[RMDB]
RNA sequence: GGGAACGACUCGAGUAGAGUCGAAAAGAUAUGGAUACCCAGUUGACGCAUUAAGACAUGCUUGCGCGGUCGGAAACGACCGAUGUGAGCAACAGCUUACUGUGCGUCAACUGGGUAUCCUAAGUCACCUGUAAAUUAUCUUCGGAUAAUUUACAGGAAAAGAAACAACAACAACAAC
Reactivity to DMS in 0.01 (KOAc 150mM, MgCl2 10mM, bicine 150mM(pH8.5), 24C), signal-to-noise 4, nucleotides 027 to 126: g010a050u010a300u000g010g000a020u000a010c020c000c000a010g030u000u000g000a020c010g010c000a010u000u000a020a020g000a090c110a280u010g020c000u000u010g020c000g000c000g000g000u000c010g000g010a130a160a220c010g010a000c000c000g010a010u000g050u010g000a000g010c010a020a090c300a160g000c010u000u000a040c300u000g020u000g000c010g020u000c000a000a000c010u000g020g000g000u000a000u000c000c000u000a000a050g020u000c030a300